[RMDB]
RNA sequence: GGGAACGACUCGAGUAGAGUCGAAAAGCAGAGAACACUCAGCGCGACUACGCCCUCGCUGCCUAAUUUGCAGCGACCUGCGUGUCUGUCAGCCUAGAUUCGUCUCUGGUUUAGUGUCUGGCAUCGAUUAAGAGACUUGCUGGUUUGUUGUGUCAACGAACGUAAAUACCUUCGGGUAUUUACGUUCAAAAGAAACAACAACAACAAC
Reactivity to 2A3 in 0.01 (KOAc 150mM, MgCl2 10mM, bicine 150mM(pH8.5), 24C), signal-to-noise 2, nucleotides 027 to 156: g010c000a000g040a020g060a240a000c090a070c050u070c050a030g030c030g040c020g110a010c050u290a010c010g000c030c000c000u030c000g000c000u000g010c000c020u300a300a280u200u180u160g000c000a000g000c000g010a010c000c000u050g020c000g010u000g010u020c070u040g010u020c000a000g010c000c000u020a020g010a020u080u040c080g020u000c020u000c000u010g010g030u030u020u020a020g020u030g090u110c010u000g040g010c030a080u080c100g210a040u120u110a140a020g000a000g000a030c010u090u040g040c000u050g000g000u130u030u040g000u010u000g000u010g070u020c010a000a050c130